[RMDB]
RNA sequence: GGGAACGACUCGAGUAGAGUCGAAAAAGCAUGUUAGGUUCGCAUUGUGCACUAUUGUGUUAUUAGUAACUAAGUAAGCUUACAAUCGAAAAUGUUUAACCAUAAAAGGGUAAAAUGGUGUAAGACAGAUACCCUCUGAGCUUCGGCUCAGAGGGAAGUACACAGUUGAGUUCGCUCAACUGUGUACAAAAGAAACAACAACAACAAC
Reactivity to 2A3 in 0.01 (KOAc 150mM, MgCl2 10mM, bicine 150mM(pH8.5), 24C), signal-to-noise 3, nucleotides 027 to 156: a000g030c050a040u050g010u070u080a040g050g030u060u080c040g000c030a020u050u120g060u080g040c000a020c040u080a140u160u180g020u010g050u100u030a050u020u020a010g110u020a060a030c030u010a110a000g090u020a040a060g060c000u050u020a020c060a070a100u060c040g050a080a030a010a060u020g000u010u060u040a010a010c000c000a000u070a130a140a010a010g070g000g000u040a020a040a060a050u050g000g000u020g030u020a020a020g020a000c010a010g090a070u110a110c000c000c000u010c000u010g010a000g000c000u030u130c260g100g000c000u000c000a000g000a000g000g000g000a000a000
Reactivity to DMS in 0.01 (KOAc 150mM, MgCl2 10mM, bicine 150mM(pH8.5), 24C), signal-to-noise 2, nucleotides 027 to 156: a090g020c030a050u010g010u000u040a100g010g010u010u010c110g060c030a190u010u020g070u020g040c140a160c030u010a040u010u020g010u000g010u000u010a120u000u010a090g040u010a040a060c060u000a030a110g010u000a060a090g030c010u010u000a020c030a080a130u000c080g030a110a090a060a060u010g000u000u000u010a090a070c020c000a040u000a030a100a190a160g010g000g020u000a080a040a030a050u010g000g040u000g020u010a060a050g000a150c060a070g010a210u000a150c000c010c010u000c000u000g000a040g040c000u010u000c300g030g000c000u000c000a030g000a000g010g000g010a000a000

Chemical mapping of a 207-nucleotide RNA with 2A3 and DMS. The 2A3 profile rests on 2,016 reads. The RNA was probed in 150 mM KOAc, 10 mM MgCl2 and 150 mM bicine (pH 8.5) at 24 C.